[RMDB]
RNA sequence: GGGAACGACUCGAGUAGAGUCGAAAAUCGAGCGCGCCCCAAGAUUUCCUCACCCGCGUCGGAGACGCGGGGAAGAGCGCAAGAGCAUACGGAAGUCUGACAGUGUCCGGCCUAACGACGGACGCUGAGUAGAUUAUGCCUUCGGGCAUAAUCUACUAAAAGAAACAACAACAACAAC
Reactivity to DMS in 0.01 (KOAc 150mM, MgCl2 10mM, bicine 150mM(pH8.5), 24C), signal-to-noise 2, nucleotides 027 to 126: u000c000g000a030g000c010g020c300g080c100c000c010c110a100a030g000a020u000u010u000c020c000u000c050a180c030c000c000g010c040g000u020c020g050g000a300g100a020c000g000c000g030g040g000g000a020a080g010a080g020c080g000c180a180a050g020a150g000c030a050u040a160c140g000g000a030a010g010u000c010u000g010a260c010a020g010u000g010u020c010c040g040g000c110c090u050a120a090c300g000a120c010g000g010a020c040g000c000u010g000
Reactivity to 2A3 in 0.01 (KOAc 150mM, MgCl2 10mM, bicine 150mM(pH8.5), 24C), signal-to-noise 3, nucleotides 027 to 126: u050c000g010a000g020c010g000c000g020c000c000c000c000a050a020g010a030u020u040u020c000c000u040c040a040c000c000c000g000c010g010u010c090g220g080a300g000a080c000g000c000g000g000g000g010a070a010g000a010g010c070g000c030a100a050g100a030g040c040a050u100a160c070g020g010a010a010g030u010c010u030g030a030c000a000g000u000g000u010c010c010g030g030c010c060u180a160a060c110g030a010c000g020g000a000c000g000c000u010g000

The record gives the reactivity of an RNA of 177 nucleotides to DMS and 2A3. For 2A3, 2,886 sequencing reads were counted. The RNA was probed in 150 mM KOAc, 10 mM MgCl2 and 150 mM bicine (pH 8.5) at 24 C. Values cover nucleotides 27 to 126. DMS adducts were read by reverse transcription with MarathonRT.